[RMDB]
RNA sequence: GGGAACGACUCGAGUAGAGUCGAAAAAUCAUGACGAAGAAAGGACGAGUGCAAGCUGAGAGGCAAGCUGAGAGGCAAGCUCAAAGAAAGGAGCGUCCAACUCCUUACCCUCGUCUUUUAAAAAGAAGCAACUACGUUGGUUCGCCAACGUAGUUGCAAAAGAAACAACAACAACAAC
Reactivity to DMS in 0.01 (KOAc 150mM, MgCl2 10mM, bicine 150mM(pH8.5), 24C), signal-to-noise 1, nucleotides 027 to 126: a180u020c130a060u000g010a150c140g020a100a100g000a020a050a050g020g000a000c020g000a000g000u000g000c050a240a030g100c010u000g000a220g000a140g050g030c010a030a290g000c000u000g000a160g050a240g000g020c020a060a140g000c010u050c020a010a170a160g010a090a090a050g000g000a020g000c050g000u000c120c090a090a270c010u000c000c030u010u000a080c070c070c010u000c010g000u000c000u010u010u000u000a000a000a090a060a020g000a010a080